[RMDB]
RNA sequence: GGGAACGACUCGAGUAGAGUCGAAAAUAGAAAGGCUAAGAACGUCGCGAUGACGUAAGGUGGGACUUUUCCUUCCGGAACCUAGCGGUUGGUUCCGAGGGGGGUGUGAUCCAGGUACCGCCGUAGACGAUAAUACUCGGUUCGCCGAGUAUUAUCGAAAAGAAACAACAACAACAAC
Reactivity to DMS in 0.01 (KOAc 150mM, MgCl2 10mM, bicine 150mM(pH8.5), 24C), signal-to-noise 2, nucleotides 027 to 126: u000a110g000a070a080a060g000g010c060u010a080a130g010a060a040c020g000u010c010g020c200g000a140u010g020a000c020g020u000a120a040g000g040u000g010g000g000a050c020u000u010u010u010c000c000u010u000c050c010g040g000a010a000c010c000u000a080g010c120g000g000u010u000g020g000u000u000c000c010g000a050g000g000g000g010g000g010u000g010u000g010a090u000c050c050a080g000g010u000a040c010c040g010c000c030g030u010a070g000a210
Reactivity to 2A3 in 0.01 (KOAc 150mM, MgCl2 10mM, bicine 150mM(pH8.5), 24C), signal-to-noise 2, nucleotides 027 to 126: u210a050g140a030a080a000g120g090c120u110a070a070g030a120a050c020g010u010c040g040c090g120a080u300g010a000c000g020u010a000a100g000g000u060g010g010g000a020c000u120u070u030u090c010c000u000u040c040c000g000g000a000a000c000c030u040a050g140c110g220g000u120u070g010g000u000u000c010c020g010a270g030g000g000g000g010g000u020g060u030g000a080u010c030c050a020g110g060u050a010c000c020g000c000c010g050u070a050g020a070